[RMDB]
RNA sequence: GGGAACGACUCGAGUAGAGUCGAAAACGCAUGCGAAAGCAUGCGGCUAUGCUAAUGCAUGGCGAGGGGUAACAACGCGCGAUUCCCCCGUAUGUGGUUAUUAUUCCGCAUACGAUUACCAGUGUCUGUUAUUAUUCAGAUACAUGGACCGCGCGCACCGUGAUUUAAUCUUCGGAUUAAAUCACGGAAAAGAAACAACAACAACAAC
Reactivity to 2A3 in 0.01 (KOAc 150mM, MgCl2 10mM, bicine 150mM(pH8.5), 24C), signal-to-noise 4, nucleotides 027 to 156: c000g000c000a000u000g000c020g030a060a000a020g000c000a000u000g000c000g000g020c000u010a000u000g000c030u120a300a050u300g030c010a010u000g010g010c080g040a050g020g020g010g000u080a050a010c050a050a050c120g000c000g000c000g040a030u090u120c020c010c010c010c020g000u000a000u000g010u010g010g050u070u060a170u240u090a140u290u040c000c010g010c000a000u000a010c010g000a000u020u110a060c010c000a010g010u000g000u000c000u000g110u050u050a280u190u060a150u230u160c000a010g000a000u010a000c050a110u030g020g020a020c020c030g000c000g000c010g000c020a010
Reactivity to DMS in 0.01 (KOAc 150mM, MgCl2 10mM, bicine 150mM(pH8.5), 24C), signal-to-noise 2, nucleotides 027 to 156: c000g050c010a000u000g010c000g040a250a120a270g010c000a010u010g000c020g000g030c050u000a000u000g010c010u000a130a160u000g020c030a040u000g000g000c030g010a120g000g020g040g010u000a110a140c010a050a020c000g040c010g080c010g020a140u000u000c000c090c060c130c050g010u000a000u000g020u000g010g020u000u000a060u000u000a300u000u000c000c000g010c010a000u020a020c020g000a100u000u000a070c030c050a140g020u000g010u000c010u000g010u010u000a200u000u020a220u000u020c020a040g020a030u000a000c000a070u020g010g010a050c040c010g000c000g020c040g020c050a140